[RMDB]
This 177-nucleotide RNA was probed chemically with DMS and 2A3. For DMS the reverse transcriptase was MarathonRT. The DMS profile rests on 3,669 reads. Conditions: 150 mM KOAc, 10 mM MgCl2 and 150 mM bicine (pH 8.5), 24 C. For 2A3 the reverse transcriptase was SuperScript II with manganese.
RNA sequence: GGGAACGACUCGAGUAGAGUCGAAAAGCAGCAGGAUCACCCAGUGUCAUGGGUGAGCUGCGCAUAGGUGCCAGCAGGAUAAUGCCAUCGUGCAGUCCUCCAGCUCUGGUAGCCAGAGUGGAUAAGGCACGGAGAUGUACUUCGGUACAUCUCCGUGAAAAGAAACAACAACAACAAC
Reactivity to DMS in 0.01 (KOAc 150mM, MgCl2 10mM, bicine 150mM(pH8.5), 24C), signal-to-noise 4, nucleotides 027 to 126: g010c030a060g030c010a050g000g000a260u000c000a000c000c000c010a020g000u000g030u000c220a140u010g000g010g030u000g000a010g000c020u000g000c000g010c090a070u000a060g000g000u000g000c020c020a110g030c130a070g000g010a050u000a080a150u010g000c010c010a150u010c240g000u010g010c000a050g010u000c010c020u000c010c030a140g010c000u000c000u000g000g000u010a120g020c050c010a010g000a010g020u010g000g010a110u010a080a110g000g010
Reactivity to 2A3 in 0.01 (KOAc 150mM, MgCl2 10mM, bicine 150mM(pH8.5), 24C), signal-to-noise 3, nucleotides 027 to 126: g030c110a020g000c010a020g020g140a290u030c000a000c020c020c010a090g060u110g180u230c180a260u040g030g000g000u000g010a000g000c000u000g000c000g000c010a020u080a150g130g000u030g030c000c010a030g020c040a000g050g010a060u070a230a050u270g010c020c040a300u190c140g100u200g000c020a010g040u030c010c000u040c000c010a090g080c040u010c010u020g100g050u160a070g120c040c010a000g010a000g010u050g010g030a090u070a260a140g050g000